[RMDB]
RNA sequence: GGGAACGACUCGAGUAGAGUCGAAAAUAGAAUGAUUUUAUCGCAUCAUAUCCUUUUUUAUGUAAUUAGUUGAUAAAAUCUAUCUGUACUUAUAUUUAACGACUGAAAUCGGUCACUUACUGAAAAACUGUAACAUCAUUUUCGAAUGAUGUUACAGAAAAGAAACAACAACAACAAC
Reactivity to DMS in 0.01 (KOAc 150mM, MgCl2 10mM, bicine 150mM(pH8.5), 24C), signal-to-noise 4, nucleotides 027 to 126: u010a040g000a070a300u010g000a000u000u000u000u000a000u010c010g040c010a100u000c010a010u000a020u050c120c060u000u020u020u050u000u000a020u010g000u010a080a070u010u030a070g020u030u050g010a020u010a000a010a020a000u000c010u000a190u030c000u000g000u020a100c140u030u000a090u000a090u020u000u010a110a070c060g000a010c000u010g010a090a120a090u020c020g000g000u000c020a040c100u000u020a170c070u000g000a050a060a060a100a130
Reactivity to 2A3 in 0.01 (KOAc 150mM, MgCl2 10mM, bicine 150mM(pH8.5), 24C), signal-to-noise 8, nucleotides 027 to 126: u110a010g040a010a080u070g000a000u000u000u000u010a000u010c000g000c020a030u010c020a010u050a090u160c040c000u130u230u100u070u050u050a060u050g050u050a130a190u090u120a180g030u090u260g010a000u010a000a010a000a000u010c010u020a080u000c020u020g090u040a070c030u150u070a080u060a090u240u120u100a110a040c030g020a010c010u020g070a050a100a170u080c010g010g000u020c010a030c080u110u300a050c030u090g120a050a050a010a050a070
An RNA of 177 nucleotides, treated with DMS and 2A3 and read out base by base. It was measured as part of the RMDB libraries RFM100 and RFMREP. Conditions: 150 mM KOAc, 10 mM MgCl2 and 150 mM bicine (pH 8.5), 24 C.